[RMDB]
RNA sequence: GGGAACGACUCGAGUAGAGUCGAAAAGGAUAUGACUUCAUAUCUAUUGCUAACCAUAUUGACUAUGAGAAGUGGAACAAUCAUCAAAGGUACGAGUCAAAUUGUUAUAUCUUCAAAGUGAUGGGUAUACCAAGGGAGAGUUCGCUCUCCCUUGGUAAAAAGAAACAACAACAACAAC
Reactivity to 2A3 in 0.01 (KOAc 150mM, MgCl2 10mM, bicine 150mM(pH8.5), 24C), signal-to-noise 3, nucleotides 027 to 126: g110g000a010u000a000u010g120a170c080u050u010c280a000u000a010u090c060u100a200u050u240g070c070u080a070a110c000c000a050u020a050u100u280g200a060c100u070a160u250g070a110g010a080a120g000u140g110g060a030a070c050a080a020u080c070a020u010c030a120a000a100g160g000u160a100c040g020a010g080u070c080a030a030a080u010u000g040u080u000a120u010a020u110c070u060u060c090a110a010a090g070u090g050a050u010g010g000g070u050a050
Reactivity to DMS in 0.01 (KOAc 150mM, MgCl2 10mM, bicine 150mM(pH8.5), 24C), signal-to-noise 3, nucleotides 027 to 126: g000g000a010u010a010u010g000a240c190u000u060c020a070u000a010u020c000u020a110u070u010g000c240u000a070a180c060c020a100u010a030u000u050g020a050c060u000a040u030g010a110g010a060a030g040u020g020g020a070a020c130a040a030u020c140a060u010c110a030a020a020g000g000u030a020c120g000a020g010u010c070a040a040a120u020u030g010u030u030a090u030a050u000c000u010u000c080a070a050a060g030u000g020a090u010g010g010g000u020a120